[RMDB]
RNA sequence: GGGAACGACUCGAGUAGAGUCGAAAACCAGUUGCUGCUCGGACUCCAACUCCUUCUUUGGCGGCAACUGCCUCGACCAGAGGUUCAUCUACAACCAGGCUGUCGGCCCUGUAGGGUUCACCCCCGAUGGUAAUACAUGAUUCGUCAUGUAUUACCAAAAAGAAACAACAACAACAAC
Reactivity to DMS in 0.01 (KOAc 150mM, MgCl2 10mM, bicine 150mM(pH8.5), 24C), signal-to-noise 9, nucleotides 027 to 126: c170c010a060g010u000u000g020c010u000g010c020u010c300g020g000a050c130u010c100c150a080a150c300u000c050c030u000u000c090u000u000u010g010g010c000g010g000c010a020a020c020u000g020c020c010u010c030g010a140c120c120a120g000a060g000g000u000u000c110a070u000c050u000a060c080a060a070c070c090a080g000g000c040u000g010u000c090g010g000c040c020c050u000g010u000a080g010g010g010u010u010c100a230c050c040c010c010c020g010a140
Reactivity to 2A3 in 0.01 (KOAc 150mM, MgCl2 10mM, bicine 150mM(pH8.5), 24C), signal-to-noise 7, nucleotides 027 to 126: c010c000a000g010u010u010g000c010u000g000c010u040c130g020g030a030c030u060c130c020a060a070c040u040c020c040u170u160c060u180u210u280g030g000c000g000g010c000a000a010c000u010g000c000c000u070c010g130a210c060c090a070g020a030g040g000u020u070c040a130u040c020u080a050c020a070a070c040c020a030g070g000c030u060g060u160c040g040g010c010c000c010u050g060u070a100g020g020g010u070u100c040a090c000c010c000c010c010g050a030
An RNA of 177 nucleotides, treated with DMS and 2A3 and read out base by base. DMS adducts were read by reverse transcription with MarathonRT. It was measured as part of the RMDB library OK2TRN.